Description
Chemical mapping of a 177-nucleotide RNA with DMS. For DMS, 4,616 sequencing reads were counted. Conditions: 150 mM KOAc, 10 mM MgCl2 and 150 mM bicine (pH 8.5), 24 C. Source: RMDB library TTRINS, as collected in RNAgym.
[RMDB]
RNA sequence: GGGAACGACUCGAGUAGAGUCGAAAAGAUAUGGAGCUCAAAUGAUCUUUGAUCGGAUUUUGAAGGUGUUGUGUCGGAAACGACACAUCACCUUCAAAAUCCGGGAGAUCAUUGAGCUCCUAAGUCAUCAUGAAUAACGGUUCGCCGUUAUUCAUGAAAAAGAAACAACAACAACAAC
Reactivity to DMS in 0.01 (KOAc 150mM, MgCl2 10mM, bicine 150mM(pH8.5), 24C), signal-to-noise 2, nucleotides 027 to 126: g010a060u010a300u010g020g010a010g010c000u010c000a020a040a070u000g000a010u000c000u010u000u010g010a100u010c010g010g010a010u000u000u000u010g010a040a020g010g020u000g010u010u010g030u020g000u010c000g010g000a140a120a280c010g020a010c000a010c000a000u000c000a010c000c000u000u000c000a000a000a020a010u000c000c000g010g010g010a000g000a000u000c000a010u000u000g000a010g000c010u000c010c000u000a010a050g010u010c040a250